[RMDB]
RNA sequence: GGGAACGACUCGAGUAGAGUCGAAAACACAGCCAUGCUCACCGCCACGGACCGUAAACCCCUGAACGGAGGGGCGUCAGCAGUAGCUAGUGGCAUCAGUUACUGCUGUAAACCCGUAGAGUUCAGGACAGAUCCCUAGGUUCGCCUAGGGAUCUGUAAAAGAAACAACAACAACAAC
Reactivity to 2A3 in 0.01 (KOAc 150mM, MgCl2 10mM, bicine 150mM(pH8.5), 24C), signal-to-noise 3, nucleotides 027 to 126: c080a000c000a000g030c010c030a050u100g020c010u010c000a010c010c000g040c020c000a050c020g050g030a050c040c000g010u050a060a070a140c010c020c000c000u000g010a010a010c000g020g190a050g000g000g000g000c000g020u030c010a000g000c010a000g000u010a000g000c000u050a050g050u060g180g080c060a090u070c010a040g000u000u000a000c000u000g000c000u000g010u000a130a160a010c010c020c010g000u020a070g020a010g090u000u000c000a000g000g000
Reactivity to DMS in 0.01 (KOAc 150mM, MgCl2 10mM, bicine 150mM(pH8.5), 24C), signal-to-noise 2, nucleotides 027 to 126: c080a100c130a070g000c050c080a030u040g000c080u000c010a030c010c000g010c090c060a090c100g000g000a120c000c030g030u020a030a170a170c050c020c000c000u000g000a000a000c010g000g010a180g000g000g000g020c080g020u000c000a000g020c000a010g040u000a000g000c000u020a110g020u000g010g010c060a130u040c110a000g010u000u060a000c000u000g000c020u000g040u000a040a050a160c000c000c000g020u050a300g010a070g000u000u000c030a000g020g010
Record summary
The record gives the reactivity of an RNA of 177 nucleotides to 2A3 and DMS. The RNA was probed in 150 mM KOAc, 10 mM MgCl2 and 150 mM bicine (pH 8.5) at 24 C. Values cover nucleotides 27 to 126.